[RMDB]
RNA sequence: GGGAACGACUCGAGUAGAGUCGAAAAGAUAUGGAUACUGCGCUAUGUAUGAUGACCCAAGAACUACCUUAAGUGUCGGAAACGACACUUAAGGCUUGGCAAGUACAUAGCGCAGUAUCCUAAGUCACAGUGAACCAAUGUUCGCAUUGGUUCACUGAAAAGAAACAACAACAACAAC
Reactivity to DMS in 0.01 (KOAc 150mM, MgCl2 10mM, bicine 150mM(pH8.5), 24C), signal-to-noise 1, nucleotides 027 to 126: g040a050u000a300u020g000g000a020u000a000c000u000g030c000g000c000u000a000u000g010u000a000u000g040a160u020g000a080c300c010c000a000a000g010a050a060c110u030a300c010c000u000u000a000a010g000u020g000u000c000g020g020a100a150a120c000g000a040c000a010c000u000u000a000a000g010g000c010u000u000g000g000c000a100a180g030u000a010c010a020u000a000g000c000g000c000a000g070u000a020u000c000c000u000a070a040g000u000c020a300

The record gives the reactivity of an RNA of 177 nucleotides to DMS.
The DMS profile rests on 897 reads.
For DMS the reverse transcriptase was MarathonRT.
The data come from the RNA Mapping Database (RMDB), library TTRINS.
The RNA was probed in 150 mM KOAc, 10 mM MgCl2 and 150 mM bicine (pH 8.5) at 24 C.